[RMDB]
RNA sequence: GGGAACGACUCGAGUAGAGUCGAAAAACCUCCUGUUUCUGCCUCAAGUUCUUUUUUCACCAUAGAAUAUUGGGUUCUGUUUAGGGAGAAGAUAAAGCUGGUUGAAGACAACGACACCUUUGAUACAUAAGUAUCGGUUAUUCGUAACCGAUACUUAAAAAGAAACAACAACAACAAC
Reactivity to DMS in 0.01 (KOAc 150mM, MgCl2 10mM, bicine 150mM(pH8.5), 24C), signal-to-noise 7, nucleotides 027 to 126: a070c060c030u010c070c030u010g000u000u000u000c010u010g000c120c020u010c050a070a070g000u010u010c010u010u000u010u020u020u020c080a090c140c110a080u000a030g000a050a040u000a080u010u000g000g020g000u010u010c040u000g010u000u010u010a130g010g000g000a020g010a090a030g010a070u020a040a060a080g010c060u000g010g010u010u000g020a090a080g010a060c130a050a050c070g010a050c100a070c090c020u010u010u020g010a080u030a070c130a130
Reactivity to 2A3 in 0.01 (KOAc 150mM, MgCl2 10mM, bicine 150mM(pH8.5), 24C), signal-to-noise 7, nucleotides 027 to 126: a010c010c020u030c010c010u040g030u040u040u000c010u030g030c010c010u040c020a050a060g030u060u040c040u030u100u060u020u060u090c070a100c090c020a070u060a060g040a050a020u100a290u150u130g020g000g000u030u010c030u020g100u040u070u070a040g010g010g010a030g020a060a010g010a040u130a100a100a020g040c050u050g040g030u050u060g070a070a020g040a060c060a080a020c080g060a010c000a050c010c030u070u050u110g100a080u080a060c040a040
The record gives the reactivity of an RNA of 177 nucleotides to DMS and 2A3.
The RNA was probed in 150 mM KOAc, 10 mM MgCl2 and 150 mM bicine (pH 8.5) at 24 C.
Reactivities are given for positions 27 through 126.